[RMDB]
RNA sequence: GGGAACGACUCGAGUAGAGUCGAAAAGAUAUGGAUUAGUUCGAAGAAUAGCGGACCCAAUGACGAUCCUCGGAAACGAGGAUUAAGACAGGGUCUCGCUAUUCUGACGAAGACUAAUCCUAAGUCAUCGUAUAUUCAGCUUCGGCUGAAUAUACGAAAAAGAAACAACAACAACAAC
Reactivity to DMS in 0.01 (KOAc 150mM, MgCl2 10mM, bicine 150mM(pH8.5), 24C), signal-to-noise 2, nucleotides 027 to 126: g030a060u010a300u030g080g010a020u000u000a000g000u040u000c000g030a300a030g010a010a000u000a000g020c000g020g000a010c000c000c020a190a170u000g030a200c300g000a020u000c000c000u000c020g000g010a100a160a300c000g010a030g000g010a000u010u000a010a160g030a130c190a110g040g000g010u010c000u000c020g000c000u000a010u000u000c000u000g010a300c260g010a060a150g000a150c000u000a010a000u010c000c000u000a020a080g000u000c010a130